[RMDB]
RNA sequence: GGGAACGACUCGAGUAGAGUCGAAAAGUAAGCAAAGACGUAAUAACCGUCAUGGUUAGUAAACUGAGCGCACGCCGUAAGAAAUGCAAACGCGUUAUGAUUCAGAACACUUGGUGCGCUAUUAUAACAUAUCCACUAGCUUCGGCUAGUGGAUAUGAAAAGAAACAACAACAACAAC
Reactivity to 2A3 in 0.01 (KOAc 150mM, MgCl2 10mM, bicine 150mM(pH8.5), 24C), signal-to-noise 3, nucleotides 027 to 126: g020u060a070a000g020c040a050a040a060g040a030c010g050u070a120a100u050a100a080c050c000g040u060c100a050u100g010g010u030u010a020g020u090a030a120a070c070u050g080a010g000c010g010c000a000c010g050c020c010g000u020a070a020g050a110a080a020u110g020c050a180a050a100c080g010c000g010u000u050a070u120g110a110u140u050c060a060g020a130a010c040a000c090u040u100g080g000u000g000c010g000c010u010a020u050u140a020u010a030a020
Reactivity to DMS in 0.01 (KOAc 150mM, MgCl2 10mM, bicine 150mM(pH8.5), 24C), signal-to-noise 6, nucleotides 027 to 126: g010u000a050a120g020c100a070a100a110g010a090c110g020u000a100a080u000a040a030c100c000g010u000c190a100u020g010g000u000u000a020g020u000a060a100a090c080u000g000a060g010c000g000c050a010c010g010c110c100g000u010a060a060g010a060a070a050u010g010c110a050a100a100c190g000c040g020u000u000a060u000g010a130u000u010c080a080g000a080a090c120a040c090u010u000g010g020u000g020c030g010c010u000a020u000u000a050u010a080a190

This 177-nucleotide RNA was probed chemically with 2A3 and DMS. For 2A3, 2,912 sequencing reads were counted. It was measured as part of the RMDB library OK2TRN. 2A3 adducts were read by reverse transcription with SuperScript II with manganese. Conditions: 150 mM KOAc, 10 mM MgCl2 and 150 mM bicine (pH 8.5), 24 C. High 2A3 reactivity points to a flexible backbone, as in loops and unpaired stretches.